[RMDB]
RNA sequence: GGGAACGACUCGAGUAGAGUCGAAAAAAAUAGUGAAAAAUUCGGGGUUGGCCUUGGCUAAACUGACCCACCCACAAUUUAUCCAAAAAAUUUAUCCACCUAACCCCAGAUCACUGCAAACGAAAUGAUCAUAAUAACUCUUCGGAGUUAUUAUGAUAAAAGAAACAACAACAACAAC
Reactivity to 2A3 in 0.01 (KOAc 150mM, MgCl2 10mM, bicine 150mM(pH8.5), 24C), signal-to-noise 5, nucleotides 027 to 126: a010a000a020u260a020g020u060g070a070a100a010a040a070u110u070c070g010g000g010g000u010u000g020g000c020c030u030u030g020g000c020u040a050a040a050c020u040g090a090c020c000c010a020c000c030c010a070c020a040a030u050u110u120a050u070c020c000a050a050a020a040a050a060u110u160u070a060u050c030c010a030c000c020u020a020a030c000c000c000c000a010g000a030u020c000a000c020u040g020c060a060a080a070c030g080a050a040a090u170g030
Reactivity to DMS in 0.01 (KOAc 150mM, MgCl2 10mM, bicine 150mM(pH8.5), 24C), signal-to-noise 3, nucleotides 027 to 126: a060a060a080u040a010g010u000g000a030a090a080a090a090u030u040c130g020g020g000g010u000u000g010g010c120c060u000u000g000g000c040u010a010a040a060c060u010g000a040c040c020c050a060c020c020c050a140c060a060a040u030u010u010a060u020c080c030a000a020a080a090a050a110u010u000u030a050u030c030c050a050c220c010u000a060a020c010c000c000c010a130g020a100u000c020a020c000u020g030c210a060a060a020c080g010a070a120a050u060g000